[RMDB]
RNA sequence: GGGAACGACUCGAGUAGAGUCGAAAAAACUCAAAAGGGUACUGGCAUGGACACCGCAUUGUUGAGAAAUAAUAUCUAAACUUUAAGGAUGUCCUUUACUCCUGGUAAGCAACCCAGCAGUAGAGCGUCCUCUGGAAAUCGUGCUGGUAAUGGCAUCUGACUAAUAUCGAUUCGUCGAUAUUAGUCAAAAAGAAACAACAACAACAAC
Reactivity to DMS in 0.01 (KOAc 150mM, MgCl2 10mM, bicine 150mM(pH8.5), 24C), signal-to-noise 3, nucleotides 027 to 156: a040a070c030u010c030a040a090a120a150g050g000g000u000a010c030u000g010g010c020a080u000g080g010a100c030a030c030c030g000c110a070u020u000g050u000u000g000a090g010a070a130a140u000a070a130u010a200u000c010u010a060a040a060c020u000u000u010a090a060g020g010a040u010g000u010c040c000u000u010u000a020c030u000c070c000u000g020g010u010a100a170g000c160a260a200c190c000c010a020g040c050a020g010u010a030g020a050g020c050g030u000c000c010u000c030u030g000g000a110a060a080u000c020g040u000g020c010u000g020g010u000a040a080u000g050g000c040a090u000c040
Reactivity to 2A3 in 0.01 (KOAc 150mM, MgCl2 10mM, bicine 150mM(pH8.5), 24C), signal-to-noise 1, nucleotides 027 to 156: a000a010c260u220c120a220a200a000a050g160g030g000u070a050c030u060g040g000c000a010u050g000g020a020c030a030c150c010g000c040a100u060u000g020u010u050g000a000g070a070a090a070u300a000a080u210a100u090c030u040a040a050a090c030u010u040u300a050a000g020g000a020u020g060u150c000c040u000u020u000a000c000u030c040c000u000g000g020u030a040a030g080c020a010a020c010c000c000a000g000c020a000g000u000a000g000a000g000c010g010u010c010c010u040c060u070g010g050a020a020a030u080c010g020u000g000c000u020g000g060u030a050a050u080g100g000c060a060u030c130